[RMDB]
RNA sequence: GGGAACGACUCGAGUAGAGUCGAAAAUCAUUGAGAUGCUGGGCGCUAUGGUCGUCCUCCUCCGGCUGACCUCCUUCUCAGCUGCUUACCGGCGCCGCACAGGCGGCAUCUCAGCUUCGUGUGCAAAAAAAGAAUGGUCGGUUCGCCGACCAUUCAAUCUUACUUAAUGCUUCGGCAUUAAGUAAGAAAAAGAAACAACAACAACAAC
Reactivity to DMS in 0.01 (KOAc 150mM, MgCl2 10mM, bicine 150mM(pH8.5), 24C), signal-to-noise 2, nucleotides 027 to 156: u000c110a150u000u000g000a000g000a020u000g000c010u000g000g040g020c020g020c020u000a090u000g050g000u010c040g000u000c030c020u000c010c020u000c070c080g000g010c010u000g030a060c050c070u000c120c070u010u000c060u000c010a030g020c000u000g010c050u000u000a040c050c010g010g000c030g060c010c030g040c130a140c100a180g000g000c080g020g050c000a010u000c010u000c000a110g010c060u000u010c110g080u000g000u010g000c010a000a000a080a170a090a150a200g000a030a000u000g000g000u010c000g010g040u000u000c300g010c000c010g010a010c000c010a010u010u010c000a060a090
Reactivity to 2A3 in 0.01 (KOAc 150mM, MgCl2 10mM, bicine 150mM(pH8.5), 24C), signal-to-noise 2, nucleotides 027 to 156: u060c020a020u010u110g000a020g000a010u000g020c040u070g000g030g000c020g020c080u200a180u300g060g050u200c030g010u010c000c010u040c010c010u030c010c030g010g000c000u000g010a020c020c000u100c020c000u210u070c010u000c020a000g000c020u010g020c020u100u050a030c030c050g000g000c010g000c000c020g000c030a070c020a080g050g000c000g000g000c000a010u000c000u000c000a000g010c030u160u160c090g060u090g030u030g110c090a050a090a000a050a050a000a020g000a000a000u010g000g010u010c000g030g000u040u030c170g060c060c000g010a000c000c000a000u000u000c000a000a000